[RMDB]
RNA sequence: GGGAACGACUCGAGUAGAGUCGAAAAGAUAUGGAUCUUUCCCAUGCAAGCGAAUCACCAUCGGAAACGAUGGGAAUCGUGAUGACCAUGGGAGAAGAUCCUAAGUCAAAAGUCGACUUCGGUCGACGGUUGUAAGUUACUUCGGUAACUUACAACCAAAAGAAACAACAACAACAAC
Reactivity to 2A3 in 0.01 (KOAc 150mM, MgCl2 10mM, bicine 150mM(pH8.5), 24C), signal-to-noise 6, nucleotides 027 to 126: g030a030u090a050u210g000g000a010u000c010u020u010u000c010c000c000a010u010g010c020a170a300g000c020g070a030a070u140c110a150c300c000a000u010c000g050g030a100a070a070c020g000a000u010g010g020g010a000a020u010c000g010u010g060a270u150g030a030c070c000a010u010g000g000g020a120g290a040a010g000a010u000c000c000u010a140a010g050u020c030a070a060a110a100g010u010c000g010a010c000u060u140c300g110g010u000c000g000a000c010
Reactivity to DMS in 0.01 (KOAc 150mM, MgCl2 10mM, bicine 150mM(pH8.5), 24C), signal-to-noise 6, nucleotides 027 to 126: g010a050u010a300u010g010g010a000u000c000u000u000u000c000c000c000a010u000g010c030a080a130g020c010g000a030a070u000c190a280c010c010a010u000c000g010g000a120a070a210c010g010a020u000g000g000g010a050a100u000c010g030u000g000a080u010g000a150c300c000a000u000g000g010g000a030g030a010a020g000a010u000c000c000u010a010a080g000u010c030a100a070a060a140g000u000c000g010a010c000u000u010c220g060g020u000c000g010a000c010
This 177-nucleotide RNA was probed chemically with 2A3 and DMS. For 2A3 the reverse transcriptase was SuperScript II with manganese. Reactivities are given for positions 27 through 126. Values are in units of 0.01, from 0 to 300, in steps of 10. The RNA was probed in 150 mM KOAc, 10 mM MgCl2 and 150 mM bicine (pH 8.5) at 24 C. The data come from the RNA Mapping Database (RMDB), library TTRDES. DMS adducts were read by reverse transcription with MarathonRT. The 2A3 profile rests on 20,456 reads. For DMS, 6,832 sequencing reads were counted.